[RMDB]
RNA sequence: GGGAACGACUCGAGUAGAGUCGAAAACCGUAUCGGUUCGCCGAUACGGAAAAGUUAAUGCUGCUAACACACAUCUUAAGGAUGGCGGUGGUAUCGCUGGUGGGACUCCCCAGUUCGCUGGGGAGAAAGAAUACUUCCGAUUCGUCGGAAGUAUUCUAAAAGAAACAACAACAACAAC
Reactivity to DMS in 0.01 (KOAc 150mM, MgCl2 10mM, bicine 150mM(pH8.5), 24C), signal-to-noise 3, nucleotides 027 to 126: c000c000g000u000a000u000c000g000g010u000u010c180g020c000c000g010a010u000a000c000g010g000a010a020a050a090g010u000u000a060a090u000g000c040u000g010c030u010a070a080c060a090c100a120c050a030u000c020u000u000a120a100g010g000a030u000g010g010c080g000g000u000g000g000u000a050u000c090g010c010u000g020g010u000g000g010g000a260c000u000c000c000c000c000a000g010u000u010c150g020c000u010g000g000g000g020a000g000a010a050
Reactivity to 2A3 in 0.01 (KOAc 150mM, MgCl2 10mM, bicine 150mM(pH8.5), 24C), signal-to-noise 1, nucleotides 027 to 126: c000c010g000u010a010u000c010g010g060u040u060c200g030c030c010g000a010u010a000c010g000g000a030a100a000a010g080u060u090a050a020u140g020c030u030g010c010u070a120a000c040a010c020a000c010a080u020c020u120u160a150a070g130g030a030u050g000g040c120g060g020u020g040g020u060a020u090c020g000c040u040g050g020u090g020g000g070a040c010u000c000c000c000c020a000g010u030u070c170g020c060u000g000g020g020g000a000g000a010a000